[RMDB]
RNA sequence: GGGAACGACUCGAGUAGAGUCGAAAACCUAUGGAUUCGUCCAUAGGGCAUUGAAACUUGCAAGAACGGGCCUUGUUCUAACAAGUCCUUUCCAACAGGUUUCUCGAGACUAGUCUUCGGACUAGUCACGUGAAUAUGCCUUCGGGCAUAUUCACGUAAAAGAAACAACAACAACAAC
Reactivity to DMS in 0.01 (KOAc 150mM, MgCl2 10mM, bicine 150mM(pH8.5), 24C), signal-to-noise 2, nucleotides 027 to 126: c000c000u010a000u010g000g020a020u000u010c170g010u010c000c000a010u000a000g010g000g030c280a050u000u010g000a010a010a000c000u000u000g020c060a130a170g000a010a000c260g000g000g000c140c070u000u000g010u000u020c180u020a140a050c010a000a000g000u000c000c000u000u000u000c000c100a090a140c020a010g000g000u010u000u000c010u000c150g000a180g000a010c000u000a000g000u000c000u000u010c140g060g000a010c010u000a000g000u000c000
Reactivity to 2A3 in 0.01 (KOAc 150mM, MgCl2 10mM, bicine 150mM(pH8.5), 24C), signal-to-noise 1, nucleotides 027 to 126: c000c010u000a000u000g000g000a020u020u100c180g050u010c060c010a000u000a010g020g020g030c080a060u010u150g010a010a000a000c000u010u030g000c090a140a080g020a010a000c050g010g040g010c000c020u020u010g000u090u150c120u210a120a050c000a000a010g030u000c000c000u000u000u030c010c000a070a030c020a040g050g000u040u040u000c080u010c030g140a180g010a000c000u000a000g000u000c020u030u050c290g040g000a010c000u000a000g000u000c000